[RMDB]
The record gives the reactivity of an RNA of 177 nucleotides to 2A3 and DMS. 2A3 adducts were read by reverse transcription with SuperScript II with manganese. DMS adducts were read by reverse transcription with MarathonRT. For 2A3, 1,264 sequencing reads were counted. Source: RMDB library OK2TST, as collected in RNAgym. Conditions: 150 mM KOAc, 10 mM MgCl2 and 150 mM bicine (pH 8.5), 24 C.
RNA sequence: GGGAACGACUCGAGUAGAGUCGAAAACCAGGAACAGGACUUCUCCCCACGUCAUCGACUGGAUGAUUGUGAGUUGAUGGAAUUGUUUUCCUGGACGGAAGCUCAGUUCCUGGACAGAACUGCUGGCACUCGUGCGUACGUUCGCGUACGCACGAGUAAAAGAAACAACAACAACAAC
Reactivity to 2A3 in 0.01 (KOAc 150mM, MgCl2 10mM, bicine 150mM(pH8.5), 24C), signal-to-noise 2, nucleotides 027 to 126: c000c010a000g000g000a010a020c020a030g000g080a040c000u030u010c020u030c000c010c010c060a010c010g050u000c000a010u020c000g300a300c260u260g190g000a010u000g010a000u130u300g000u020g020a120g050u060u030g060a090u060g010g050a000a000u090u160g190u130u180u070u010c000c010u010g000g010a000c060g020g000a000a000g020c010u020c010a000g000u010u020c000c000u000g000g020a010c020a020g080a070a050c020u100g040c010u060g050g000c040
Reactivity to DMS in 0.01 (KOAc 150mM, MgCl2 10mM, bicine 150mM(pH8.5), 24C), signal-to-noise 1, nucleotides 027 to 126: c010c000a020g000g020a030a040c040a050g060g010a080c010u000u000c000u010c090c030c030c000a000c000g000u010c000a000u000c020g020a210c280u000g010g000a020u000g000a020u010u060g010u010g000a030g010u010u020g010a070u010g000g000a020a060u010u010g000u020u000u000u000c000c000u000g000g010a110c220g010g000a030a030g000c040u040c000a060g000u000u000c000c020u000g010g000a090c180a050g000a080a090c120u000g000c110u000g000g000c300